[RMDB]
RNA sequence: GGGAACGACUCGAGUAGAGUCGAAAAGAUAUGGAUCUUCAAGGGAGCUAUGUGUCGGAAACGACAUGCAUAGCAUCGAUCUUGGGAUCCUAAGUCAAAGGCAUCCUCUGUUCGCAGAGGAUGCCAAGAUAUGUUGAUGGUUCGCCAUCAACAUAUCAAAAGAAACAACAACAACAAC
Reactivity to DMS in 0.01 (KOAc 150mM, MgCl2 10mM, bicine 150mM(pH8.5), 24C), signal-to-noise 7, nucleotides 027 to 126: g010a010u000a020u010g000g000a000u000c000u000u020c010a010a010g000g000g010a000g040c000u000a010u000g010u010g010u000c000g020g000a010a010a030c000g020a010c000a020u030g030c300a040u000a010g010c000a300u000c290g000a010u020c000u000u000g000g000g000a010u000c000c000u000a010a040g000u000c000a100a120a120g010g000c000a000u000c000c000u000c000u000g010u000u020c260g030c010a010g000a010g000g000a000u000g010c000c000a000a020
Reactivity to 2A3 in 0.01 (KOAc 150mM, MgCl2 10mM, bicine 150mM(pH8.5), 24C), signal-to-noise 7, nucleotides 027 to 126: g010a000u010a010u050g010g000a000u020c030u300u260c150a000a000g020g000g010a020g000c000u010a010u090g030u000g010u000c000g000g000a010a000a000c010g010a000c010a010u120g110c040a050u040a020g000c000a020u300c010g000a000u000c000u000u000g000g020g000a010u000c000c000u000a000a000g000u000c030a110a100a070g010g000c000a000u000c010c010u000c010u020g090u080u130c300g010c130a000g000a000g000g000a000u000g000c000c000a000a000